Overview:
Structure probing data (DMS) for a 177-nucleotide construct. It was measured as part of the RMDB library OK2TRN. Conditions: 150 mM KOAc, 10 mM MgCl2 and 150 mM bicine (pH 8.5), 24 C.

RNA sequence: GGGAACGACUCGAGUAGAGUCGAAAACUAUCCAGGUAUGAGCUUGUUUGUGCUCUUUCUUCUACCUACUCUAUUUGUUGAGUACUUACUUUAAAUGGUCUAGGCACUGGGAACACAAUCAGUGAUCCCUCGAGAUAACGUUCGCGUUAUCUCGAGGAAAAGAAACAACAACAACAAC
Reactivity to DMS in 0.01 (KOAc 150mM, MgCl2 10mM, bicine 150mM(pH8.5), 24C), signal-to-noise 1, nucleotides 027 to 126: c110u020a060u000c130c080a120g020g000u010a040u000g010a230g010c010u000u000g020u010u010u010g030u040g030c060u000c010u000u000u000c100u000u010c080u000a050c020c040u000a020c020u000c010u000a040u000u000u000g010u010u010g000a030g020u000a120c170u010u010a080c060u000u000u030a020a060a030u000g010g000u000c100u000a030g060g000c000a030c190u000g030g000g010a020a060c030a030c040a050a040u000c130a060g010u030g020a070u000c040